Description:
An RNA of 177 nucleotides, treated with 2A3 and DMS and read out base by base. The DMS profile rests on 1,930 reads. For 2A3, 1,304 sequencing reads were counted.
RNA sequence: GGGAACGACUCGAGUAGAGUCGAAAAUUCCUCUGAAUUGUAAAGAAGGGAGACAGGGACCACUGAUAAGACAUGGUCUAUGGUAUUCAUCAGACUUGGCUUCUUUAUCUCCUGCUUCAUCAGAGGCUGCGUGAAUUUAGUUCGCUAAAUUCACGCAAAAAGAAACAACAACAACAAC
Reactivity to 2A3 in 0.01 (KOAc 150mM, MgCl2 10mM, bicine 150mM(pH8.5), 24C), signal-to-noise 1, nucleotides 027 to 126: u030u020c000c000u020c010u050g050a090a100u160u080g000u230a190a070a050g060a040a190g000g020g010a010g020a000c020a030g070g030g000a000c000c010a010c000u010g000a000u020a010a000g040a000c000a020u020g090g040u120c060u090a010u040g000g010u120a060u090u080c020a000u040c000a000g090a130c060u070u090g000g030c040u010u040c000u000u060u080a100u010c010u000c000c000u020g030c010u020u030c000a020u030c000a010g010a000g020g000c060
Reactivity to DMS in 0.01 (KOAc 150mM, MgCl2 10mM, bicine 150mM(pH8.5), 24C), signal-to-noise 2, nucleotides 027 to 126: u000u000c010c000u000c010u010g010a010a150u000u000g020u000a080a080a070g020a100a130g020g000g000a030g010a030c210a030g010g020g040a040c020c020a100c010u010g000a000u000a030a050g000a100c010a030u000g010g010u020c230u020a040u020g010g020u000a100u000u000c140a010u000c020a010g010a100c260u010u000g000g020c170u010u000c010u000u010u000a140u020c000u000c000c000u000g010c050u000u010c020a070u000c010a010g010a020g000g020c300